Conditions: 150 mM KOAc, 10 mM MgCl2 and 150 mM bicine (pH 8.5), 24 C.
This 177-nucleotide RNA was probed chemically with 2A3 and DMS.
For 2A3, 1,142 sequencing reads were counted.
For 2A3 the reverse transcriptase was SuperScript II with manganese.
The DMS profile rests on 2,167 reads.

RNA sequence: GGGAACGACUCGAGUAGAGUCGAAAACUAAUGGUCUUGUAUUCGGCUUAUACAAGAAUAUGUGCACAGGUAGUCCUUCUAUAGUUGAAUUUAAUAGGUUGGCUACCUGUGACUGGACUGAAAGUGGCAGUGUAGCAUACUUCGGUAUGCUACACUGAAAAGAAACAACAACAACAAC
Reactivity to 2A3 in 0.01 (KOAc 150mM, MgCl2 10mM, bicine 150mM(pH8.5), 24C), signal-to-noise 2, nucleotides 027 to 126: c020u050a050a030u090g060g020u010c000u010u030g010u030a020u000u080c030g080g000c180u130u090a030u000a100c030a010a010g000a010a030u060a020u040g170u060g030c010a010c000a000g020g020u000a000g020u040c010c000u020u030c020u000a090u010a070g080u120u100g150a230a200u120u060u110a130a030u030a000g070g000u020u020g000g000c000u010a000c010c020u000g010u000g000a000c000u010g000g000a030c020u040g040a050a130a000g100u100g120g030
Reactivity to DMS in 0.01 (KOAc 150mM, MgCl2 10mM, bicine 150mM(pH8.5), 24C), signal-to-noise 2, nucleotides 027 to 126: c030u000a060a120u000g000g010u000c020u010u010g000u010a010u000u000c090g020g030c150u020u010a130u000a020c070a050a060g010a030a060u000a040u010g000u010g020c000a000c000a000g000g020u010a010g000u000c010c050u000u000c000u000a050u000a070g000u000u020g010a140a120u000u000u000a110a030u000a000g000g000u010u000g000g000c000u000a010c010c000u000g020u000g000a040c040u000g020g020a090c090u000g000a090a080a060g020u010g010g030